[RMDB]
RNA sequence: GGGAACGACUCGAGUAGAGUCGAAAACAAAGAACAUGAUCGUGAUUCACGGUUGGCAUCCGACGGACAAGCACACGGGCGUGUCACCGAUCGAGGCGCUGAAGGGUGUUCUAGUCGAGCAGAUCAGUCACUAAAGCGAUUUCGAUCGCUUUAGUGAAAAAGAAACAACAACAACAAC
Reactivity to DMS in 0.01 (KOAc 150mM, MgCl2 10mM, bicine 150mM(pH8.5), 24C), signal-to-noise 3, nucleotides 027 to 126: c070a130a100a140g000a080a070c090a090u010g000a090u000c040g030u010g000a130u010u020c090a110c060g020g000u000u000g010g000c010a020u000c030c020g000a220c050g010g020a050c180a100a120g010c070a080c080a070c060g000g010g020c090g020u000g000u010c080a080c040c040g000a090u010c060g020a060g000g010c030g000c030u000g010a030a200g000g000g020u000g020u000u010c040u000a060g020u000c040g000a060g040c080a080g010a040u000c030a110g010
Reactivity to 2A3 in 0.01 (KOAc 150mM, MgCl2 10mM, bicine 150mM(pH8.5), 24C), signal-to-noise 2, nucleotides 027 to 126: c030a010a090a050g150a060a030c030a080u100g010a060u080c030g050u060g060a270u090u120c080a000c090g000g050u130u110g060g000c010a020u000c020c030g030a020c020g100g010a050c060a210a020g020c000a040c020a000c080g050g030g020c090g090u050g040u070c060a030c070c060g030a040u090c060g000a070g010g010c040g000c040u020g030a040a040g050g070g000u060g060u060u080c020u030a020g060u000c040g020a030g000c020a030g030a080u030c010a000g080